RNA sequence: GGGAACGACUCGAGUAGAGUCGAAAACUUGUGUCCAAAGGAAUGCCAUUUGAUAUUUCUUUCUGGAACGGGGACACGGCUGAGUUCAAAUAUCCAUAUGAUCAUCCUAUCUGGAUAAAACGACAUGGUACGUGCUAAUAUUCGUAUUAGCACGUACAAAAGAAACAACAACAACAAC
Reactivity to DMS in 0.01 (KOAc 150mM, MgCl2 10mM, bicine 150mM(pH8.5), 24C), signal-to-noise 5, nucleotides 027 to 126: c070u000u000g040u010g010u000c000c010a050a040a050g000g020a020a020u000g020c090c050a280u000u010u010g030a060u000a050u000u000u000c010u000u010u000c150u010g010g020a300a070c080g000g000g000g020a080c040a040c060g000g010c070u010g020a080g000u010u010c070a040a090a100u000a030u000c010c010a040u000a050u000g000a070u010c120a070u010c110c020u000a090u000c090u000g010g010a050u010a030a060a040a080c140g000a060c150a080u010g000
Reactivity to 2A3 in 0.01 (KOAc 150mM, MgCl2 10mM, bicine 150mM(pH8.5), 24C), signal-to-noise 2, nucleotides 027 to 126: c010u070u110g040u070g030u020c010c010a030a020a040g000g000a030a020u030g020c040c010a110u130u120u300g110a070u070a070u100u070u010c000u070u080u060c110u080g030g050a050a030c020g050g000g000g020a010c020a020c070g040g000c070u090g030a040g090u060u120c070a060a070a040u080a010u010c010c010a020u040a070u180g080a080u090c040a060u010c040c020u060a070u040c040u050g010g000a020u070a060a140a020a030c060g080a020c030a080u120g130